RNA sequence: GGGAACGACUCGAGUAGAGUCGAAAACUGGCUGACUUGCUAAACACUGAAAGGGAAAAUGUGGAUAUAUUCAGUGUGCAAUUGAAGAGGAAACAUCCGCCUCUAACGGACGUUAGGUUUUCCGCACUCAGUAUGCAAUCUUCGGAUUGCAUACUGAAAAAGAAACAACAACAACAAC
Reactivity to DMS in 0.01 (KOAc 150mM, MgCl2 10mM, bicine 150mM(pH8.5), 24C), signal-to-noise 3, nucleotides 027 to 126: c050u000g000g000c020u000g020a200c110u010u000g010c060u010a090a120a060c000a000c010u010g000a030a030a110g020g010g000a090a080a100a050u020g030u000g010g000a080u000a070u010a080u000u000c000a010g000u000g010u020g010c060a050a050u010u020g010a120a070g000a160g000g000a090a030a040c120a090u000c020c000g010c030c030u000c030u000a070a100c170g000g000a080c160g000u000u000a040g010g010u000u010u000u020c010c020g000c130a240c230
Reactivity to 2A3 in 0.01 (KOAc 150mM, MgCl2 10mM, bicine 150mM(pH8.5), 24C), signal-to-noise 2, nucleotides 027 to 126: c000u020g050g000c010u020g000a100c030u040u030g000c010u110a270a220a040c000a000c010u000g040a080a050a030g120g080g000a060a110a050a060u200g100u140g110g080a020u090a000u000a020u160u020c000a010g000u010g000u030g030c000a010a060u110u140g030a040a010g050a010g000g020a060a050a010c020a050u030c030c010g050c000c020u090c030u030a060a070c040g090g070a000c060g020u060u070a090g020g020u000u000u050u010c000c010g000c010a050c030
Source information: The record gives the reactivity of an RNA of 177 nucleotides to DMS and 2A3. For DMS the reverse transcriptase was MarathonRT. The data come from the RNA Mapping Database (RMDB), library OK2TRN. In probing experiments dimethyl sulfate is read out at A N1 and C N3, which are open when not base-paired.